[RMDB]
RNA sequence: GGGAACGACUCGAGUAGAGUCGAAAAAAAAAAAGAUAUGGAAUACGGGAGCGUUAUACUACCCACCCGUGUUCGGAAACGAACACGGAGGUAUGGGCGCAUCGAUCGUAUUCCUAAGUCAAAAAAACAUACAUUCAGUGUUCGCACUGAAUGUAUGAAAAGAAACAACAACAACAAC
Reactivity to DMS in 0.01 (KOAc 150mM, MgCl2 10mM, bicine 150mM(pH8.5), 24C), signal-to-noise 2, nucleotides 027 to 126: a000a000a090a130a040a070a040g000a040u000a300u000g000g000a030a010u000a010c000g020g000g030a050g040c000g030u030u030a120u020a300c170u000a030c020c020c030a250c210c000c010g040u000g000u000u000c000g000g000a090a070a140c010g000a000a000c000a010c010g000g000a000g000g010u010a000u000g080g020g010c010g030c010a130u000c180g010a050u010c010g000u000a000u010u000c000c010u000a010a070g020u010c010a010a000a020a050a100a050a170
Reactivity to 2A3 in 0.01 (KOAc 150mM, MgCl2 10mM, bicine 150mM(pH8.5), 24C), signal-to-noise 1, nucleotides 027 to 126: a000a000a000a000a010a010a010g060a010u120a020u180g000g010a010a000u010a040c010g000g000g000a020g090c020g010u060u040a240u060a300c060u030a040c010c000c020a120c020c020c000g000u000g010u000u010c000g000g010a050a090a060c010g000a000a000c000a010c040g010g000a000g010g000u040a050u080g070g060g010c000g000c060a190u300c060g050a060u120c000g030u000a010u010u000c010c000u010a150a010g040u050c060a000a050a050a000a000a050a150
An RNA of 177 nucleotides, treated with DMS and 2A3 and read out base by base. For 2A3, 2,351 sequencing reads were counted. It was measured as part of the RMDB library TTRDES. 2A3 adducts were read by reverse transcription with SuperScript II with manganese. For DMS the reverse transcriptase was MarathonRT.